[RMDB]
RNA sequence: GGGAACGACUCGAGUAGAGUCGAAAAGCGAGGCUUAAUUCCUUUGUUGAGGCCGUAUUUUUGCGAAGUCUGCCCAAAGCACGUAGUGUUUGAAGAUUUCGGUCCUAUGCAAUAUGAACCCAUGAACCAUGUCAGGUCCUGACGGAAGCAGCAUUAAGACAUAUAACAGCUUCGGCUGUUAUAUGUCAAAAGAAACAACAACAACAAC
Reactivity to DMS in 0.01 (KOAc 150mM, MgCl2 10mM, bicine 150mM(pH8.5), 24C), signal-to-noise 4, nucleotides 027 to 156: g020c050g020a120g010g030c050u000u000a060a160u000u000c020c020u010u000u000g020u010u000g010a120g020g010c030c010g050u000a020u000u000u000u000u000g010c050g010a060a100g020u000c000u000g000c040c060c050a070a090a100g030c030a030c030g040u000a120g030u000g010u000u000u000g010a100a070g010a100u010u000u000c040g030g010u000c020c010u010a090u000g020c070a050a080u000a130u000g010a060a130c010c030c000a110u000g000a060a070c040c020a110u000g010u000c100a120g010g010u000c040c010u000g000a110c080g000g010a100a130g020c040a060g030c050a130u000u000a110a240
Reactivity to 2A3 in 0.01 (KOAc 150mM, MgCl2 10mM, bicine 150mM(pH8.5), 24C), signal-to-noise 4, nucleotides 027 to 156: g070c090g060a030g090g030c020u040u060a060a030u120u110c020c010u080u090u100g070u040u060g050a050g030g000c010c000g010u020a190u020u110u010u090u150g050c040g020a050a010g010u010c020u010g080c020c040c030a090a060a010g090c030a010c100g260u250a110g030u050g050u030u050u070g040a030a040g010a010u030u040u050c060g010g020u040c010c010u060a050u090g020c010a080a030u050a070u290g040a060a090c000c020c000a040u110g050a020a030c030c010a050u070g080u100c020a010g000g100u040c000c050u020g030a020c030g010g000a050a000g020c030a010g000c000a010u060u110a080a040
Chemical mapping of a 207-nucleotide RNA with DMS and 2A3. The 2A3 profile rests on 2,858 reads. For 2A3 the reverse transcriptase was SuperScript II with manganese. The reactions ran in a buffer of 150 mM KOAc, 10 mM MgCl2 and 150 mM bicine (pH 8.5), at 24 C.